Chemical mapping of a 177-nucleotide RNA with DMS and 2A3.

[RMDB]
RNA sequence: GGGAACGACUCGAGUAGAGUCGAAAAUUGUCGUCUGUACAUUUUCCGUUUGAAUUUUCUAUCAUGCAAGCCUCAGAGAUUUGGUAGAUGCUUAAUGAUGUAGAGGUUGCGAUGAAUUUUGGAUUGUGAUAUAUAUGGCGUUCGCGCCAUAUAUAUCAAAAGAAACAACAACAACAAC
Reactivity to DMS in 0.01 (KOAc 150mM, MgCl2 10mM, bicine 150mM(pH8.5), 24C), signal-to-noise 2, nucleotides 027 to 126: u000u000g010u000c020g020u000c100u020g020u020a020c030a030u000u000u000u000c050c060g000u020u010u020g030a090a080u000u010u000u000c040u000a040u000c040a050u020g010c060a040a090g020c010c020u000c050a090g000a130g000a100u000u010u000g000g020u000a100g030a120u010g010c030u000u010a040a020u000g010a090u000g010u010a080g010a020g000g010u000u000g010c020g000a030u000g010a070a080u000u000u010u000g010g000a130u000u000g020u000
Reactivity to 2A3 in 0.01 (KOAc 150mM, MgCl2 10mM, bicine 150mM(pH8.5), 24C), signal-to-noise 2, nucleotides 027 to 126: u050u030g000u020c060g100u090c030u090g120u080a000c010a070u000u020u050u070c020c000g080u010u060u160g070a090a060u000u000u090u080c050u060a050u070c030a060u110g010c050a090a150g140c010c000u050c010a040g030a030g020a150u020u030u040g000g000u020a030g030a300u250g060c020u000u070a050a010u060g070a030u080g030u090a030g020a000g000g000u030u050g020c010g090a030u020g030a070a020u100u160u070u120g100g040a070u090u220g050u000
DMS adducts were read by reverse transcription with MarathonRT. Values are in units of 0.01, from 0 to 300, in steps of 10. The reactions ran in a buffer of 150 mM KOAc, 10 mM MgCl2 and 150 mM bicine (pH 8.5), at 24 C.